[RMDB]
RNA sequence: GGGAACGACUCGAGUAGAGUCGAAAAUGUUCCGUUCCACGGUCCAGUGCGGGAAGAGGCCGAUGUGCUGGAUCACGUAUCCCAUGGAACGUCUGAGCUCCACCGGAUCGUAUGAGGAGAGGGGGCGUAGCCGUUUCACCUUCGGGUGAAACGGCUAAAAAGAAACAACAACAACAAC
Reactivity to 2A3 in 0.01 (KOAc 150mM, MgCl2 10mM, bicine 150mM(pH8.5), 24C), signal-to-noise 1, nucleotides 027 to 126: u060g010u020u060c010c000g000u060u010c080c020a080c110g020g000u050c000c000a000g000u000g080c060g020g040g060a100a050g090a060g090g130c070c000g060a060u080g060u070g020c050u010g010g000a040u000c020a040c020g060u040a030u040c000c010c000a010u040g010g000a000a020c000g030u030c060u020g080a030g020c010u000c010c000a150c050c010g000g030a070u080c000g050u190a120u300g060a070g090g020a060g010a120g080g000g010g000g030c030g050
Reactivity to DMS in 0.01 (KOAc 150mM, MgCl2 10mM, bicine 150mM(pH8.5), 24C), signal-to-noise 1, nucleotides 027 to 126: u010g020u000u000c020c030g000u000u000c010c050a120c140g000g000u010c000c030a030g000u000g000c030g000g010g000a180a120g010a060g020g030c060c050g020a180u010g000u000g000c020u010g020g000a030u020c060a120c170g020u020a030u010c010c010c050a160u010g010g010a030a000c080g000u000c030u020g010a280g010c000u000c010c030a090c010c070g000g010a030u000c060g020u000a100u010g010a110g000g000a050g000a070g000g000g010g010g050c300g020